RNA sequence: GGGAACGACUCGAGUAGAGUCGAAAAGUGCAUUUUCUAAGAUCGUAGAGGAUAUUUUCACUGAAGUAGAUUUUAAAGAAUGGCGGAAACUCUAUUUUGCUAAGUUUUUAGAGGUUAAACGUAAAGAAUACCGGACCAUAUUCGUAUGGUCCGGUAUAAAAGAAACAACAACAACAAC
Reactivity to DMS in 0.01 (KOAc 150mM, MgCl2 10mM, bicine 150mM(pH8.5), 24C), signal-to-noise 1, nucleotides 027 to 126: g000u000g020c030a010u000u000u000u000c030u020a070a010g000a040u000c050g030u000a180g030a260g000g000a130u030a050u000u010u010u010c080a100c090u010g010a080a120g010u000a120g010a030u000u000u020u010a080a040a090g030a060a020u020g000g000c010g000g020a130a160a080c020u000c040u000a030u030u000u010u000g000c130u010a120a150g000u000u000u010u010u010a080g000a080g000g000u000u030a000a040a100c110g020u020a090a060a110g010a110
The record gives the reactivity of an RNA of 177 nucleotides to DMS. The RNA was probed in 150 mM KOAc, 10 mM MgCl2 and 150 mM bicine (pH 8.5) at 24 C. The DMS profile rests on 606 reads.